[RMDB]
RNA sequence: GGGAACGACUCGAGUAGAGUCGAAAAGAUAUGGACGUGAGACUAGCAAACACUAAGACAGUCGGAAACGAUCGAGUGUUUGAACUACUAGCUCACGUCCUAAGUCAAAGGUAACUUCGGUUACCAACAUUAGUGACAGGUUCGCCUGUCACUAAUGAAAAGAAACAACAACAACAAC
Reactivity to 2A3 in 0.01 (KOAc 150mM, MgCl2 10mM, bicine 150mM(pH8.5), 24C), signal-to-noise 5, nucleotides 027 to 126: g010a010u030a000u070g010g000a000c000g020u010g000a010g100a300c000u000a000g020c000a000a000a000c010a010c020u060a140a050g250a230c120a170g110u010c010g000g020a040a030a020c020g010a040u180c180g100a030g050u000g010u000u020u000g000a050a030c080u220a020c000u000a230g000c000u000c000a000c000g000u000c000c000u000a000a000g000u000c020a050a030a050g000g000u000a000a000c010u060u140c300g080g000u000u000a010c000c000a010a010
Reactivity to DMS in 0.01 (KOAc 150mM, MgCl2 10mM, bicine 150mM(pH8.5), 24C), signal-to-noise 5, nucleotides 027 to 126: g000a010u000a300u010g000g010a000c010g020u000g020a020g000a140c000u000a010g010c000a010a010a010c010a020c010u020a130a090g010a140c300a170g000u000c010g000g000a080a030a130c000g010a020u010c130g010a030g010u000g000u000u000u000g000a060a030c140u020a300c020u000a000g000c010u000c000a010c000g000u010c010c000u000a000a030g010u000c030a040a090a110g010g000u000a000a010c000u000u010c130g020g000u000u000a000c000c000a040a130

Record summary
An RNA of 177 nucleotides, treated with 2A3 and DMS and read out base by base. DMS adducts were read by reverse transcription with MarathonRT. It was measured as part of the RMDB library TTRDEL. Values cover nucleotides 27 to 126. Conditions: 150 mM KOAc, 10 mM MgCl2 and 150 mM bicine (pH 8.5), 24 C.